[RMDB]
Structure probing data (2A3) for a 207-nucleotide construct. The RNA was probed in 150 mM KOAc, 10 mM MgCl2 and 150 mM bicine (pH 8.5) at 24 C. Source: RMDB library M2RFPK, as collected in RNAgym.
RNA sequence: GGGAACGACUCGAGUAGAGUCGAAAAGUUCGCAUGGUGCACUAUUGUGUUAUUAGUAACUAAGUAAGCUUACAAUCGAAAAUGUUUAACCAUAAAAGGGUAAAAUGGUUUAAGACAGUCUGAUACUUUACGGCUUCACGUUUCGACGUGAAGCCAACCCUUAUGGCUUCUUCGGAAGCCAUAAGGGAAAAGAAACAACAACAACAAC
Reactivity to 2A3 in 0.01 (KOAc 150mM, MgCl2 10mM, bicine 150mM(pH8.5), 24C), signal-to-noise 2, nucleotides 027 to 156: g140u110u100c050g030c120a020u030g040g000u060g070c030a000c080u080a160u170u300g000u000g010u080u020a030u000u060a030g070u050a040a080c040u000a040a040g040u060a130a000g040c020u140u080a040c020a060a100u140c040g030a120a050a020a000u050g000u000u090u040a020a000c000c000a000u040a150a200a020a020g060g050g000u090a040a040a020a040u050g010g010u030u070u090a050a020g060a000c020a000g080u080c040u060g040a060u060a300c020u040u040u170a060c070g000g030c040u000u000c000a000c000g020u040u030u130c160g050a000c000g020u000g030a000a000g020c020c000a000a000